[RMDB]
RNA sequence: GGGAACGACUCGAGUAGAGUCGAAAAUGGCGUGGUGGUGUCAUCAUCACGGCCGAAGUUGCUGACACUCCCUUUAAUGACGGAUUCCUCAUUAAUGAGUUUUACCGCCUUCACGCCGCGCGGUACAGCGUGCUGGAUGGUUCGCCAUCCAGCACGCAAAAGAAACAACAACAACAAC
Reactivity to DMS in 0.01 (KOAc 150mM, MgCl2 10mM, bicine 150mM(pH8.5), 24C), signal-to-noise 1, nucleotides 027 to 126: u000g010g020c000g000u000g020g050u000g010g000u000g010u010c100a020u000c020a020u010c040a090c070g020g050c060c040g000a090a110g000u010u000g020c070u000g040a050c040a060c050u020c020c060c010u000u020u000a040a030u000g000a050c110g020g000a210u000u000c030c030u000c030a040u030u000a100a060u000g000a160g000u010u010u000u000a060c030c040g000c010c010u000u020c060a020c000g020c000c000g000c300g000c000g000g010u000a030c300a120